This 177-nucleotide RNA was probed chemically with 2A3 and DMS. For DMS the reverse transcriptase was MarathonRT. The 2A3 profile rests on 1,469 reads. The RNA was probed in 150 mM KOAc, 10 mM MgCl2 and 150 mM bicine (pH 8.5) at 24 C. 2A3 adducts were read by reverse transcription with SuperScript II with manganese.

RNA sequence: GGGAACGACUCGAGUAGAGUCGAAAACAAAUGCUCGUCACAAUAGUGCUGACCGAACGCAUCAUUGCUGAAAAGCACUGCAUCGCCGGUGAUGUAAGUCAUCAUGCUGUCAGGCCAGUGCAGCAUGGGGAUACAAACCGUUCGCGGUUUGUAUCCCAAAAGAAACAACAACAACAAC
Reactivity to 2A3 in 0.01 (KOAc 150mM, MgCl2 10mM, bicine 150mM(pH8.5), 24C), signal-to-noise 1, nucleotides 027 to 126: c030a010a100a030u050g010c000u040c050g110u070c050a000c000a050a210u170a210g040u070g060c010u020g030a020c000c030g060a120a040c050g000c010a020u060c000a050u030u040g000c010u020g080a040a050a050a000g000c020a020c010u010g040c010a070u030c140g020c040c040g070g000u070g020a020u100g050u080a050a080g060u030c000a010u010c000a000u110g030c020u030g040u020c010a010g160g110c050c000a040g050u040g030c000a000g000c000a010u030g040
Reactivity to DMS in 0.01 (KOAc 150mM, MgCl2 10mM, bicine 150mM(pH8.5), 24C), signal-to-noise 2, nucleotides 027 to 126: c110a080a110a080u000g030c000u000c150g020u000c000a100c050a120a100u020a130g030u010g000c060u000g030a020c000c070g020a120a190c200g010c020a030u000c080a060u000u020g000c040u010g000a060a020a300a010g000c040a100c120u000g000c140a030u000c040g060c070c100g000g020u000g000a130u000g010u000a080a090g010u000c060a060u000c030a030u000g000c050u000g020u000c050a070g020g010c070c060a070g020u000g000c050a020g000c010a000u010g120